This 207-nucleotide RNA was probed chemically with DMS and 2A3. It was measured as part of the RMDB library RNAMAK. The DMS profile rests on 4,962 reads. The 2A3 profile rests on 11,004 reads.

RNA sequence: GGGAACGACUCGAGUAGAGUCGAAAAAUGACGUUCGCGUCAUCAUAAUCCUAAGUCUUCAGCGUCUUGGAUUUAUGUGUGGAGAUAAUCGGAAACGAUUAUCUAUGAAGCACAUUGUCAGACGCGAAGAUAUGGAAUUUACAGCGUUCGCGCUGAAGAAAACAAGCUGAUUCGUCAGCUUGUUUUCAAAAGAAACAACAACAACAAC
Reactivity to DMS in 0.01 (KOAc 150mM, MgCl2 10mM, bicine 150mM(pH8.5), 24C), signal-to-noise 2, nucleotides 027 to 156: a030u010g010a040c030g010u000u010c260g060c010g040u000c010a060u000c060a110u000a120a070u000c010c000u010a070a300g010u000c000u000u020c030a140g050c030g030u010c000u020u010g020g020a040u010u010u000a010u000g000u000g010u000g000g000a010g020a010u000a000a020u000c000g000g000a210a170a240c010g010a020u000u000a000u000c000u010a060u010g010a140a300g000c010a010c000a010u000u000g010u000c020a030g010a040c000g010c000g000a010a010g030a030u000a140u010g010g010a050a060u000u000u000a140c040a050g000c000g030u000u010c190g000c030g010c000u000g010a060a230
Reactivity to 2A3 in 0.01 (KOAc 150mM, MgCl2 10mM, bicine 150mM(pH8.5), 24C), signal-to-noise 9, nucleotides 027 to 156: a010u020g000a010c020g020u040u070c300g040c030g200u020c010a020u030c020a070u120a260a110u050c000c010u040a130a050g020u000c000u010u020c050a080g010c010g010u010c030u120u280g180g010a090u270u300u130a020u030g000u000g010u030g000g010a010g000a000u000a000a000u000c010g030g030a080a050a050c000g000a000u010u010a000u000c000u020a300u040g010a010a000g010c000a000c000a000u010u010g010u010c000a000g000a000c000g000c000g000a000a000g000a000u030a040u020g020g030a040a060u100u170u150a110c010a010g000c000g050u060u110c220g000c010g020c100u040g020a080a050